Chemical mapping of a 177-nucleotide RNA with 2A3 and DMS. Values cover nucleotides 27 to 126. Conditions: 150 mM KOAc, 10 mM MgCl2 and 150 mM bicine (pH 8.5), 24 C. The data come from the RNA Mapping Database (RMDB), library OK2TST. The 2A3 profile rests on 21,701 reads.
[RMDB]
RNA sequence: GGGAACGACUCGAGUAGAGUCGAAAAAAGAUAUGGAACGCCGUAUUCGUGCAUUGAUUCGUUGGAAUGCCUUAGCAAUGGUACUUCGCGCGAAUAAAACAGGUGAUGAUUUAGGUGGUCACUUGGACCACCACGAAAAUUUCGAUUUUCGUGGUGGAAAAGAAACAACAACAACAAC
Reactivity to 2A3 in 0.01 (KOAc 150mM, MgCl2 10mM, bicine 150mM(pH8.5), 24C), signal-to-noise 9, nucleotides 027 to 126: a000a000g120a060u140a070u130g040g020a140a030c060g040c070c010g030u050a060u040u090c040g010u060g040c020a050u030u110g080a060u130u050c030g030u060u140g080g030a090a040u060g020c000c030u090u090a060g070c080a090a130u120g010g020u040a060c080u020u030c050g020c000g000c010g080a010a000u050a040a070a010a010c020a010g000g010u020g010a030u030g030a030u030u070u150a120g070g050u050g040g000u010c000a010c020u010u010g000g010a010
Reactivity to DMS in 0.01 (KOAc 150mM, MgCl2 10mM, bicine 150mM(pH8.5), 24C), signal-to-noise 9, nucleotides 027 to 126: a090a080g010a110u000a070u000g010g020a110a120c180g010c030c020g010u000a050u000u000c020g030u000g010c050a100u000u000g000a110u000u010c040g020u000u000g010g000a050a050u000g000c050c040u000u010a140g020c200a060a040u010g010g000u000a030c140u000u000c040g010c060g010c010g000a020a020u000a030a040a090a110c050a030g010g010u000g000a040u000g000a080u000u000u010a090g010g010u000g010g010u000c010a030c030u000u000g000g010a230